Structure probing data (DMS and 2A3) for a 177-nucleotide construct. The data come from the RNA Mapping Database (RMDB), library RFM100. The reactions ran in a buffer of 150 mM KOAc, 10 mM MgCl2 and 150 mM bicine (pH 8.5), at 24 C. For 2A3 the reverse transcriptase was SuperScript II with manganese.

RNA sequence: GGGAACGACUCGAGUAGAGUCGAAAACUACAUCGGGGUUUUGUUUUUUUGUUGCUCCCACGAUCGAAUCGAUAUGAGGAAGAUGAAAAAUUAAUCAACCCCGGUUUAGUCACUUUCACUGCAUUAAGCUCAGAUCUUUAUUCGUAAAGAUCUGAGCAAAAGAAACAACAACAACAAC
Reactivity to DMS in 0.01 (KOAc 150mM, MgCl2 10mM, bicine 150mM(pH8.5), 24C), signal-to-noise 1, nucleotides 027 to 126: c010u010a000c060a000u000c000g000g000g020g020u010u020u020u000g000u000u000u000u030u000u000u040g000u030u010g020c030u010c000c010c010a010c220g000a030u000c000g000a100a170u000c070g000a060u000a020u010g010a250g000g000a040a300g000a000u020g000a000a000a040a030a000u020u000a030a010u000c130a020a020c010c010c000c000g040g000u000u000u000a000g000u000c020a100c130u030u030u000c030a140c040u030g000c130a120u010u060a050a210
Reactivity to 2A3 in 0.01 (KOAc 150mM, MgCl2 10mM, bicine 150mM(pH8.5), 24C), signal-to-noise 5, nucleotides 027 to 126: c000u000a020c000a020u010c010g000g000g000g000u000u010u080u070g040u000u000u010u040u020u020u030g180u120u090g060c100u010c020c010c000a020c060g020a020u020c020g080a090a190u190c040g010a020u010a040u110g060a110g010g010a010a040g030a030u030g020a030a000a000a010a010u130u180a060a050u080c040a000a010c000c000c000c000g000g000u000u000u000a000g000u000c010a030c050u050u150u090c090a100c120u150g080c030a130u120u130a110a010